[RMDB]
Structure probing data (2A3) for a 207-nucleotide construct.
The 2A3 profile rests on 693 reads.
Values cover nucleotides 27 to 156.
RNA sequence: GGGAACGACUCGAGUAGAGUCGAAAAGCGCGAAGCGGUGUAGCGUCACUUUGAUGGCGGUACUAUGAAUUGAUGCAAGGUGUGGAGCGACCUUAAACAGUUCUGAUGGUGCUCUGAAUGGAGUGCUUGAGGCCUCGCCGAUUCGUCGGCGAGGCAAGACUCCAACAAGAUUCGUCUUGUUGGAGUCAAAAGAAACAACAACAACAAC
Reactivity to 2A3 in 0.01 (KOAc 150mM, MgCl2 10mM, bicine 150mM(pH8.5), 24C), signal-to-noise 1, nucleotides 027 to 156: g020c010g000c040g110a100a030g000c050g020g000u070g020u020a010g140c030g000u000c000a010c050u070u150u270g220a290u050g110g000c030g030g010u010a040c040u060a070u150g070a080a130u140u070g020a070u140g050c110a140a030g000g010u010g010u080g010g000a000g020c020g000a010c010c000u000u080a000a110a000c050a050g000u040u000c010u000g030a040u090g000g060u010g000c000u000c020u120g140a080a110u300g000g000a010g000u000g040c010u030u070g110a090g050g000c000c010u000c010g000c000c000g140a100u050u020c150g070u040c000g000g000c010g000a000g050g000c080a000a000